[RMDB]
RNA sequence: GGGAACGACUCGAGUAGAGUCGAAAAGCGGGGCUUGAAACGCGGGUAGCGCGCACGCCCGGCGAAGAAGUUCGCAUACGCGGUGUGCUGGUGCCGAAGUGUCUGCUUCAACGGCACGCUCGACACCUAGAACAUACCGUAUUCGUACGGUAUGUAACAGAGAUCAGAGAUUCGUCUCUGAUCUCUGAAAAGAAACAACAACAACAAC
Reactivity to DMS in 0.01 (KOAc 150mM, MgCl2 10mM, bicine 150mM(pH8.5), 24C), signal-to-noise 2, nucleotides 027 to 156: g020c020g030g010g050g060c030u000u000g000a060a090a040c030g000c020g000g020g060u000a100g030c010g010c100g010c020a080c080g020c000c000c010g030g000c020g000a020a130g000a210a190g000u000u010c020g030c010a110u000a250c050g000c070g070g030u000g030u000g000c020u010g020g000u000g010c000c000g010a050a080g010u010g020u010c040u010g020c030u010u000c090a150a090c070g010g040c010a020c010g030c030u000c010g000a080c040a020c000c010u000a120g010a160a080c000a010u000a000c000c020g040u000a010u000u000c280g030u000a020c010g000g000u030a010u010g010u000a070a180
Reactivity to 2A3 in 0.01 (KOAc 150mM, MgCl2 10mM, bicine 150mM(pH8.5), 24C), signal-to-noise 5, nucleotides 027 to 156: g030c040g010g020g040g020c020u030u070g080a100a110a030c070g000c030g000g030g060u120a070g070c030g000c010g000c070a000c010g010c000c000c000g010g010c020g000a010a010g060a040a020g140u030u040c000g010c040a030u070a220c070g020c070g050g000u030g000u010g020c040u050g010g040u030g000c010c010g010a040a020g020u040g030u070c080u130g060c030u190u110c070a070a040c020g000g010c020a010c020g030c040u000c010g010a010c010a020c020c020u020a040g030a120a000c000a010u000a010c000c000g000u000a020u010u090c210g050u010a000c000g000g000u020a000u000g000u010a030a000
Chemical mapping of a 207-nucleotide RNA with DMS and 2A3. It was measured as part of the RMDB library M2RFOK. Conditions: 150 mM KOAc, 10 mM MgCl2 and 150 mM bicine (pH 8.5), 24 C.